RNA sequence: GGGAACGACUCGAGUAGAGUCGAAAAGAGCUGCGAGUUUUUCGGCGAUUUCGAAGGGGGUUUCGCUGCGGGAUUCGGCGGGGAUCCACACGAAGUUUGCUUGCGAGUGUGCGGCGCCGAUGUGGUCCCUCCACAGUUAUUUCGAUAACUGUGGAGGAAAAGAAACAACAACAACAAC
Reactivity to 2A3 in 0.01 (KOAc 150mM, MgCl2 10mM, bicine 150mM(pH8.5), 24C), signal-to-noise 2, nucleotides 027 to 126: g040a030g000c060u060g000c030g070a090g080u070u010u020u080u090c000g000g010c030g050a040u020u020u180c070g090a150a200g000g020g000g070g000u000u080u060c010g000c040u020g030c040g020g030g040a050u090u050c010g000g000c020g000g040g010g020a010u020c000c020a020c020a010c030g020a040a040g030u100u170u180g130c040u120u200g030c000g020a100g120u070g070u090g010c050g000g000c020g000c010c000g000a030u060g030u030g030g020u030c000
Reactivity to DMS in 0.01 (KOAc 150mM, MgCl2 10mM, bicine 150mM(pH8.5), 24C), signal-to-noise 2, nucleotides 027 to 126: g010a130g020c030u000g000c080g010a100g010u000u000u010u000u000c040g010g010c040g000a160u010u000u000c060g010a120a140g010g000g000g000g010u000u000u000c020g000c050u000g020c100g020g000g000a100u000u000c050g010g010c050g030g020g000g000a080u010c020c020a030c040a060c030g000a090a090g010u000u000u020g020c050u010u000g050c050g000a160g020u000g000u010g010c030g000g030c020g010c020c040g000a090u010g020u000g010g010u000c080
Annotation: Structure probing data (2A3 and DMS) for a 177-nucleotide construct. For DMS, 3,106 sequencing reads were counted. It was measured as part of the RMDB library OK2TST. The RNA was probed in 150 mM KOAc, 10 mM MgCl2 and 150 mM bicine (pH 8.5) at 24 C.